Chemical mapping of a 177-nucleotide RNA with DMS and 2A3. The 2A3 profile rests on 685 reads. 2A3 is a SHAPE reagent: it acylates the 2'-hydroxyl of flexible nucleotides of all four kinds. 2A3 adducts were read by reverse transcription with SuperScript II with manganese.

RNA sequence: GGGAACGACUCGAGUAGAGUCGAAAAGCUCUAGGAGACUAGAGCGAUACGUUAGACAGCUCGUGGCAUGACUAACGGAUAGCCAGGUACGAGGUUGCCAGAGGACAUAGCUAUAGCUAUGUCCAAAGUGCUAUCUUACCUUCGGGUAAGAUAGCACAAAAGAAACAACAACAACAAC
Reactivity to DMS in 0.01 (KOAc 150mM, MgCl2 10mM, bicine 150mM(pH8.5), 24C), signal-to-noise 2, nucleotides 027 to 126: g010c000u000c000u010a000g000g000a280g030a300c000u010a000g000a000g010c000g010a060u020a120c020g000u000u010a020g000a100c010a020g020c040u010c210g000u040g000g000c020a120u000g000a070c010u000a000a060c030g040g010a020u000a070g000c060c000a080g010g000u010a020c160g010a010g020g020u000u020g000c050c020a090g010a170g000g000a000c000a000u000a010g000c020u040a150u060a080g000c040u000a000u000g020u000c000c000a000a020a040
Reactivity to 2A3 in 0.01 (KOAc 150mM, MgCl2 10mM, bicine 150mM(pH8.5), 24C), signal-to-noise 1, nucleotides 027 to 126: g000c000u000c000u010a000g000g070a070g170a130c000u000a000g000a000g000c000g000a000u000a010c000g000u000u000a010g050a010c000a030g000c040u020c080g190u150g070g000c070a090u030g030a080c000u000a000a000c000g000g070a010u120a000g090c030c010a020g010g030u080a040c100g070a040g140g050u100u000g010c000c000a020g000a160g070g000a000c000a000u000a000g050c030u160a110u050a300g000c000u000a010u010g000u000c000c000a000a000a000
Source: RMDB library OK1LIB, as collected in RNAgym.
Conditions: 150 mM KOAc, 10 mM MgCl2 and 150 mM bicine (pH 8.5), 24 C.